[RMDB]
RNA sequence: GGGAACGACUCGAGUAGAGUCGAAAAGAAGAUUCACUCACUAUAGACUCAUGAGGUAGAGUCUCAGUUGUGCUACCUCAAUCACAAUAUUACAGUUAGGCGAAACUGUAAUUAAGAACAGAAUCGCCUCUGUUCUAGUGAGUGAAUCUGGAGAGUCCUCCCAUACUACUUUCGAGUAGUAUGGGAGAAAAGAAACAACAACAACAAC
Reactivity to DMS in 0.01 (KOAc 150mM, MgCl2 10mM, bicine 150mM(pH8.5), 24C), signal-to-noise 2, nucleotides 027 to 156: g000a180a030g000a040u000u000c000a010c000u000c000a020c030u000a100u000a160g000a100c090u000c080a210u010g000a030g060g000u010a020g000a090g010u010c030u000c050a210g010u000u000g030u000g020c020u000a030c000c030u000c020a090a110u000c060a130c130a120a200u000a110u000u000a040c010a000g010u010u010a060g020g010c040g010a120a010a300c000u010g020u000a000a080u000u010a110a160g010a060a030c000a010g010a010a280u000c030g020c100c000u000c020u000g020u000u000c070u000a040g030u000g020a060g020u000g000a000a010u000c010u000g000g000a110g010a090g010u000c050
Reactivity to 2A3 in 0.01 (KOAc 150mM, MgCl2 10mM, bicine 150mM(pH8.5), 24C), signal-to-noise 1, nucleotides 027 to 156: g070a020a010g000a010u000u010c000a000c000u000c000a000c000u030a030u040a140g040a050c010u070c200a130u090g010a000g020g010u020a020g010a030g130u040c050u030c080a050g020u070u060g050u070g010c010u000a010c000c020u010c010a010a040u080c040a020c030a120a160u120a070u200u180a020c010a020g060u140u220a030g050g010c000g020a010a020a010c010u010g000u060a000a050u140u240a080a050g050a040a010c000a000g000a010a030u020c000g000c000c000u010c000u010g010u010u000c000u000a000g000u000g000a000g000u000g000a000a000u000c000u000g000g020a110g000a000g060u030c000
The record gives the reactivity of an RNA of 207 nucleotides to DMS and 2A3. The reactions ran in a buffer of 150 mM KOAc, 10 mM MgCl2 and 150 mM bicine (pH 8.5), at 24 C. For DMS, 3,466 sequencing reads were counted.